[RMDB]
RNA sequence: GGGAACGACUCGAGUAGAGUCGAAAAGUCUGGUAUAGUGCAACAGCAGAACAAUUUGCUGAGGGCUAUUGAGGCGCAACAGCAUCUGUUGCAACUCACAGUCUGGGGCAUCAAGCAGCUCCAGGCACAAUCGUACGUUCUUCGGAACGUACGAUUGAAAAGAAACAACAACAACAAC
Reactivity to DMS in 0.01 (KOAc 150mM, MgCl2 10mM, bicine 150mM(pH8.5), 24C), signal-to-noise 1, nucleotides 027 to 126: g000u010c010u000g040g010u000a060u000a050g000u000g030c110a120a150c030a020g010c020a030g010a080a090c300a170a130u000u000u000g000c000u000g010a150g060g000g000c030u000a040u000u010g000a060g050g000c300g000c000a040a030c000a030g030c070a120u020c020u000g000u000u000g000c020a010a130c010u030c000a080c290a020g020u000c000u000g000g000g000g000c000a120u000c190a140a210g030c180a170g000c010u000c000c020a040g000g010c040a100
Reactivity to 2A3 in 0.01 (KOAc 150mM, MgCl2 10mM, bicine 150mM(pH8.5), 24C), signal-to-noise 2, nucleotides 027 to 126: g030u000c000u060g020g060u130a040u030a090g030u070g130c030a090a040c000a070g140c020a020g070a090a070c130a190a300u090u090u030g000c010u040g000a070g000g090g000c010u000a060u050u180g030a020g020g010c010g060c030a000a060c000a040g000c070a110u090c100u060g000u000u020g000c000a010a000c000u030c020a050c030a030g020u010c000u000g000g020g040g000c020a020u100c050a120a090g110c060a040g000c000u000c030c010a000g020g020c000a010